[RMDB]
RNA sequence: GGGAACGACUCGAGUAGAGUCGAAAACUUCUCAGAAUCCAGCAAGAGGCGUGGAGAGAGGGCCGCGGUGCUCUGGAGUAGAGGCUCUGCCUUCGAGACACCAUCGAUCGUCCCUUCUUCUUUACCUUCUUCUGGCUCUUCUUGGAGACGCGACCGGGAUCAAUUAAUGGUUCGCCAUUAAUUGAUCAAAAGAAACAACAACAACAAC
Reactivity to 2A3 in 0.01 (KOAc 150mM, MgCl2 10mM, bicine 150mM(pH8.5), 24C), signal-to-noise 5, nucleotides 027 to 156: c010u030u020c010u020c010a010g050a050a080u300c010c010a070g030c110a010a000g010a000g040g020c140g060u010g010g000a000g000a000g000a010g000g000g000c010c020g030c020g000g000u000g000c010u000c000u020g020g020a090g040u110a030g010a010g010g000c040u070c210u300g030c030c000u120u140c010g020a040g040a010c000a020c150c040a010u020c020g130a300u040c010g010u010c000c000c000u050u040c020u080u010c000u010u020u010a010c000c000u000u020c000u000u010c000u000g000g000c000u000c000u000u000c000u000u060g030g010a010g000a010c080g030c070g110a060c030c030g040g110
Reactivity to DMS in 0.01 (KOAc 150mM, MgCl2 10mM, bicine 150mM(pH8.5), 24C), signal-to-noise 2, nucleotides 027 to 156: c020u000u010c020u000c030a250g000a100a080u020c010c000a070g010c150a060a070g000a070g020g010c140g020u000g030g010a070g010a150g010a030g010g030g050c070c000g020c060g010g060u000g050c100u000c000u010g040g010a300g020u000a110g010a140g040g020c050u020c140u000g010c040c010u000u010c030g000a260g000a140c020a040c080c010a060u000c020g000a130u010c020g000u030c000c010c000u000u000c030u010u000c010u000u000u000a070c040c010u000u000c030u000u000c010u010g000g020c030u000c000u000u010c040u020u020g060g010a070g000a090c040g010c040g000a300c040c030g030g000